[RMDB]
RNA sequence: GGGAACGACUCGAGUAGAGUCGAAAAGAGAUAAUUAUCAGGUGACUUACAGUUGUGGAUAUAAUAAAUAGAUCCUGUGUAACCUUUAGCUCUGGUUCCACCAAAGAUGCUCACAACCAGGAUACUGCAACCUAUCCAAAUUCGUUUGGAUAGGUUGAAAAGAAACAACAACAACAAC
Reactivity to DMS in 0.01 (KOAc 150mM, MgCl2 10mM, bicine 150mM(pH8.5), 24C), signal-to-noise 5, nucleotides 027 to 126: g000a080g010a090u000a050a100u010u010a100u000c080a050g000g020u000g010a140c120u010u020a090c140a080g010u000u000g020u010g020g010a110u000a070u010a090a080u010a050a100a120u000a080g000a050u000c010c010u000g000u010g010u000a110a060c070c030u000u000u000a070g000c040u010c040u000g010g000u000u000c060c070a100c090c110a040a070a070g000a070u000g010c040u000c080a030c090a060a060c060c030a040g000g010a080u000a060c120u000g010
Reactivity to 2A3 in 0.01 (KOAc 150mM, MgCl2 10mM, bicine 150mM(pH8.5), 24C), signal-to-noise 2, nucleotides 027 to 126: g030a020g010a010u120a170a140u220u200a110u180c050a020g000g060u010g020a050c040u090u130a040c060a050g010u040u040g000u110g050g000a020u010a020u030a200a070u080a100a090a030u100a030g040a020u020c020c000u040g010u000g010u060a030a060c030c000u070u060u110a000g010c000u000c060u050g030g000u200u020c040c050a040c020c000a070a090a070g040a080u110g020c030u010c030a020c020a050a030c030c000a010g050g000a020u040a200c050u030g030